[RMDB]
RNA sequence: GGGAACGACUCGAGUAGAGUCGAAAAAGCAAUGGCAGGUCUACAUAAUGAUAGACUAUAUAAUCAAAGAAAGGGAGUAUUCACGUGACUUUAGAAUUAGCAUGUGUCUGCAUAGAAUAUGCCUCUGGCUUUACCAGCAGUAGAAAAUUUAUAGAAAGCUAAAUUAAAUGUUCGCAUUUAAUUUAGCAAAAGAAACAACAACAACAAC
Reactivity to DMS in 0.01 (KOAc 150mM, MgCl2 10mM, bicine 150mM(pH8.5), 24C), signal-to-noise 1, nucleotides 027 to 156: a120g020c070a060a040u010g030g030c060a050g060g000u020c030u010a060c020a100u000a060a140u010g000a150u010a020g000a060c070u000a130u020a090u000a100a060u000c020a090a080a040g000a090a060a060g000g020g020a110g000u000a010u010u000c020a020c040g020u010g030a100c050u000u000u010a120g030a090a140u000u000a040g030c030a050u000g030u000g020u000c030u000g000c050a110u000a040g000a100a080u000a060u000g000c000c030u000c030u000g010g000c000u010u000u000a100c010c040a040g020c000a080g000u010a080g050a060a080a050a080u000u000u000a120u000a170g000a110a050a150
Reactivity to 2A3 in 0.01 (KOAc 150mM, MgCl2 10mM, bicine 150mM(pH8.5), 24C), signal-to-noise 2, nucleotides 027 to 156: a000g070c030a030a030u040g010g000c020a030g000g030u000c000u000a030c020a070u290a070a050u160g040a080u040a010g000a010c000u000a000u000a000u010a010a060u090c050a050a080a000g070a130a110a010g020g010g000a010g010u050a040u040u110c010a020c040g000u010g160a230c000u040u010u090a060g020a120a140u070u010a100g010c000a010u020g000u000g020u010c030u020g030c010a020u050a040g060a100a080u140a070u160g020c030c010u050c110u060g140g000c020u000u040u030a020c000c010a010g050c000a020g010u090a010g060a010a090a040a020u120u300u110a250u070a040g050a040a040a000
This 207-nucleotide RNA was probed chemically with DMS and 2A3. Source: RMDB library OK3TST, as collected in RNAgym. The RNA was probed in 150 mM KOAc, 10 mM MgCl2 and 150 mM bicine (pH 8.5) at 24 C.